[RMDB]
RNA sequence: GGGAACGACUCGAGUAGAGUCGAAAAGCUGUGAAUAGGUAAGCCUAUAUCUGUUCGCACUACAGGCACUAUGUCGCAUCAUGGUCCCUGUGAACUCGAAGCUUGAUGCGACAAGUUUUGAGUGAUCUCAGACACUAUAGGCUUAGUUCUUGAGAGCCGAGACCAGUAUGUUCGCAUACUGGUUUCGAAAAGAAACAACAACAACAAC
Reactivity to 2A3 in 0.01 (KOAc 150mM, MgCl2 10mM, bicine 150mM(pH8.5), 24C), signal-to-noise 9, nucleotides 027 to 156: g030c060u020g030u040g120a060a010u040a070g030g020u020a030a010g000c000c000u010a010u000a020u040c010u010g030u020u070c050g020c000a020c020u170a080c020a040g030g040c040a010c040u090a100u200g020u040c060g010c100a050u050c010a010u090g070g020u090c030c020c030u070g050u050g080a090a040c020u020c070g040a030a010g030c000u010u010g020a020u070g070c030g060a030c010a000a000g000u020u020u040u020g020a020g000u030g110a120u020c040u010c060a030g010a040c030a010c110u020a010u010a030g000g000c000u010u020a020g030u090u020c020u050u120g040a110g000a000g050c010
Reactivity to DMS in 0.01 (KOAc 150mM, MgCl2 10mM, bicine 150mM(pH8.5), 24C), signal-to-noise 5, nucleotides 027 to 156: g010c050u000g020u000g010a080a050u000a040g010g010u000a040a040g020c010c010u000a030u000a020u000c010u000g030u020u000c030g010c060a060c050u000a080c040a050g010g020c090a060c040u000a060u000g020u010c090g000c110a100u000c010a030u000g010g000u000c050c010c010u010g020u010g010a160a080c030u000c020g010a020a060g000c010u000u010g010a070u010g030c210g020a120c010a030a030g010u000u000u010u000g010a070g010u000g010a120u000c040u000c040a100g010a110c080a050c070u000a040u010a030g010g010c010u000u000a050g010u000u010c030u000u000g000a150g000a130g010c090

Source information:
Chemical mapping of a 207-nucleotide RNA with 2A3 and DMS. Conditions: 150 mM KOAc, 10 mM MgCl2 and 150 mM bicine (pH 8.5), 24 C. 2A3 adducts were read by reverse transcription with SuperScript II with manganese. Values cover nucleotides 27 to 156. Reactivities are rounded to 0.1 and cut off at 0 and 3. For 2A3, 13,549 sequencing reads were counted.